Conditions: 150 mM KOAc, 10 mM MgCl2 and 150 mM bicine (pH 8.5), 24 C. An RNA of 177 nucleotides, treated with DMS and 2A3 and read out base by base. The DMS profile rests on 12,780 reads. It was measured as part of the RMDB library TTRDES. Reactivities are given for positions 27 through 126. 2A3 adducts were read by reverse transcription with SuperScript II with manganese.
[RMDB]
RNA sequence: GGGAACGACUCGAGUAGAGUCGAAAAGAUAUGGAUCCAUACAGCUUUUGACGCUCUCUGGGUCGGAAACGACCCUGAGAGCGAUAAGCUGUGAUGGAUCCUAAGUCAAACCCUCCUUCGGGAGGGACUAAACCAAAUAGUUCGCUAUUUGGUUUAGAAAAGAAACAACAACAACAAC
Reactivity to DMS in 0.01 (KOAc 150mM, MgCl2 10mM, bicine 150mM(pH8.5), 24C), signal-to-noise 6, nucleotides 027 to 126: g000a050u010a300u000g000g000a000u000c000c000a010u000a030c000a010g010c000u000u010u010u000g020a240c110g010c000u000c000u000c000u000g010g020g010u000c000g010g000a090a110a190c010g020a010c000c010c000u000g000a010g000a000g030c000g000a010u000a010a010g010c000u000g000u010g010a020u000g010g000a010u000c000c000u000a020a090g010u000c030a120a140a190c010c000c000u000c000c000u000u020c210g020g000g010a010g010g000g010a030
Reactivity to 2A3 in 0.01 (KOAc 150mM, MgCl2 10mM, bicine 150mM(pH8.5), 24C), signal-to-noise 4, nucleotides 027 to 126: g030a000u090a030u170g000g000a000u000c000c010a010u000a010c010a000g010c000u130u170u250u300g300a150c060g010c000u000c000u000c020u030g020g000g010u020c020g020g010a050a060a020c010g010a000c000c040c020u000g010a000g000a000g000c000g000a000u000a010a000g000c000u000g000u090g020a010u000g000g000a010u010c000c000u000a010a000g000u010c000a030a040a300c000c000c000u000c000c000u050u100c290g140g000g000a000g010g000g000a020